[RMDB]
RNA sequence: GGGAACGACUCGAGUAGAGUCGAAAAAUUCAGUUAUUGAACAAGGUAAGGCAUUAUCCUUUAGAGAUGCUGAUGUGCCAGUUGUAGACAAUGGUACCAUUUCUACUGCUGAUUGGUCUGAACCCAUUCUGCUUGAACCUGCUGAAUAUGUAAAACCGUUCAGGAUUACCUUCGGGUAAUCCUGAACAAAAGAAACAACAACAACAAC
Reactivity to 2A3 in 0.01 (KOAc 150mM, MgCl2 10mM, bicine 150mM(pH8.5), 24C), signal-to-noise 1, nucleotides 027 to 156: a020u040u000c020a000g020u070u240a030u080u140g060a010a080c080a090a070g060g000u010a020a070g020g000c040a040u000u130a100u270c040c020u020u210u070a110g020a080g000a120u020g090c020u040g020a060u080g020u010g020c000c010a000g040u020u130g090u070a030g020a100c120a040a060u050g050g020u140a270c090c000a000u000u000u000c000u000a040c000u010g070c000u030g020a050u020u050g030g040u020c090u080g090a030a030c000c000c000a040u110u000c050u030g000c010u000u020g000a020a040c000c000u000g010c000u000g030a100a040u120a020u110g080u060a100a070a000a000c020c010